[RMDB]
RNA sequence: GGGAACGACUCGAGUAGAGUCGAAAAGUAGUUAUGCUGAAAAUCGUUGAGGUUGUAUGGAAUAGGUUAACCGUAAGACCUUAAGUUGAAAAACUUUAAAAUGAAUCUCAGGUAAAUUACUUUGAGUAAAACCUUCGUCGUUUCGACGACGAAGGAAGGUAAAAAAACGAUUCGUCGUUUUUUUACCAAAAGAAACAACAACAACAAC
Reactivity to 2A3 in 0.01 (KOAc 150mM, MgCl2 10mM, bicine 150mM(pH8.5), 24C), signal-to-noise 2, nucleotides 027 to 156: g010u030a000g000u000u030a090u300g010c030u020g000a030a020a050a100u060c070g000u010u060g030a010g010g000u020u030g020u120a080u050g020g060a070a110u070a180g230g030u170u160a120a020c000c000g000u020a020a020g030a020c010c000u000u010a020a010g000u020u030g050a090a050a000a050a000c030u090u090u150a100a230a060a030u050g010a030a040u000c040u030c130a020g000g050u140a070a090a030u020u010a020c010u020u070u080g020a040g030u030a010a070a050a020c000c000u000u000c000g000u000c000g000u000u080u060c140g070a000c010g000a000c000g000a010a000g000g000a000a010
Reactivity to DMS in 0.01 (KOAc 150mM, MgCl2 10mM, bicine 150mM(pH8.5), 24C), signal-to-noise 1, nucleotides 027 to 156: g030u000a020g020u000u000a040u000g030c030u000g000a060a010a030a160u000c030g030u000u020g030a070g020g020u000u010g020u000a020u000g020g010a120a220u000a110g010g020u000u000a100a230c020c030g040u000a070a150g000a020c000c000u000u010a060a050g010u000u000g000a140a190a140a040a050c000u000u000u000a020a040a070a010u010g020a110a140u010c070u000c010a020g010g030u000a050a020a030u000u000a000c000u000u000u000g000a090g020u000a030a040a070a110c000c000u000u010c000g020u000c020g020u000u000u000c260g030a050c000g010a000c020g000a000a020g000g020a010a010